[RMDB]
RNA sequence: GGGAACGACUCGAGUAGAGUCGAAAAGUGGGAAAUUAUUACUGACAGGAAAAUUAGACUGAAUGCAGUAAAGUAGCAUAAAAUUCCUCAUCAUUCCACAGGUUUGGUUAUGCUCCAAACCAAAACGCAUUCCUUAAGUAUAAAGGAAUUGUUACAACAUCGUGCUUUUAUUCGUAAAAGCACGAUGAAAAGAAACAACAACAACAAC
Reactivity to DMS in 0.01 (KOAc 150mM, MgCl2 10mM, bicine 150mM(pH8.5), 24C), signal-to-noise 1, nucleotides 027 to 156: g020u000g000g040g020a030a090a070u010u000a150u020u000a110c030u000g000a190c030a080g010g000a030a130a060a150u010u010a160g020a180c000u000g000a140a210u000g010c010a090g060u000a050a070a260g050u000a100g000c110a100u000a020a060a020a090u000u000c000c000u000c010a050u000c070a140u000u000c020c010a110c090a120g050g030u000u000u000g020g010u000u020a100u010g030c070u010c020c000a090a030a030c000c000a020a020a030a120c080g000c100a100u000u000c000c020u000u000a050a120g040u020a110u000a050a060a020g020g020a010a030u000u000g010u000u000a140c090a070a090
Reactivity to 2A3 in 0.01 (KOAc 150mM, MgCl2 10mM, bicine 150mM(pH8.5), 24C), signal-to-noise 3, nucleotides 027 to 156: g070u090g000g030g020a020a040a090u110u080a020u030u010a040c020u050g100a100c010a030g070g150a050a050a100a090u280u180a200g060a060c030u020g040a060a070u070g040c010a010g010u040a010a050a000g090u080a010g010c030a030u130a060a150a020a040u050u010c020c020u030c000a080u020c000a050u080u060c010c010a040c050a120g000g000u020u010u010g020g020u050u070a050u110g010c010u000c030c000a000a000a000c000c000a010a060a000a000c060g000c000a030u010u040c000c000u040u060a140a070g060u140a200u100a300a080a030g010g010a010a030u050u070g030u030u100a030c020a100a010

Conditions: 150 mM KOAc, 10 mM MgCl2 and 150 mM bicine (pH 8.5), 24 C. The record gives the reactivity of an RNA of 207 nucleotides to DMS and 2A3. Values are in units of 0.01, from 0 to 300, in steps of 10. 2A3 adducts were read by reverse transcription with SuperScript II with manganese. The 2A3 profile rests on 1,428 reads. For DMS, 1,704 sequencing reads were counted. It was measured as part of the RMDB library OK3TST.